RNA sequence: GGGAACGACUCGAGUAGAGUCGAAAACAGUUGCCAGUGACCCCUGGAUUUUACUGGAUCCAAAAUGGAAUUUUUUGCAGCACACAGGCCUUUUAUAUGUGGAUUUUCACUACUAUCAUGAAGAAUGUAUACAAAUAAUCUGUGUCCACGUUAGGAACUCGCUAAUAUCAUUCGUGAUAUUAGCGAGAAAAGAAACAACAACAACAAC
Reactivity to DMS in 0.01 (KOAc 150mM, MgCl2 10mM, bicine 150mM(pH8.5), 24C), signal-to-noise 1, nucleotides 027 to 156: c040a180g000u000u000g010c020c010a080g010u000g010a150c010c060c040c050u000g020g000a040u000u000u000u000a150c120u000g000g020a070u000c010c040a020a060a050a160u010g000g020a100a050u000u000u010u050u020u020g020c010a100g000c080a050c070a060c010a090g010g000c020c020u000u000u000u000a060u000a050u000g030u000g000g010a170u000u000u000u000c030a070c010u000a110c090u010a100u010c070a100u000g000a040a070g020a070a040u010g000u000a050u000a080c050a030a060a060u000a060a050u020c020u000g010u010g020u010c010c040a040c060g000u000u020a070g000g020a130a190
Reactivity to 2A3 in 0.01 (KOAc 150mM, MgCl2 10mM, bicine 150mM(pH8.5), 24C), signal-to-noise 1, nucleotides 027 to 156: c030a030g010u020u050g090c020c000a010g000u060g160a070c040c010c040c030u020g000g000a030u220u000u000u010a050c020u040g060g030a020u070c000c020a040a110a040a050u080g000g050a050a060u050u090u040u040u070u230g030c040a010g010c040a000c000a000c000a020g100g000c010c020u100u120u130u080a250u040a070u130g030u010g020g070a040u050u030u150u220c100a010c040u110a000c010u050a110u080c050a020u130g090a030a050g070a110a000u070g080u160a070u040a080c050a070a010a010u250a110a050u110c010u050g060u000g000u060c030c050a050c050g000u130u270a020g000g130a050a010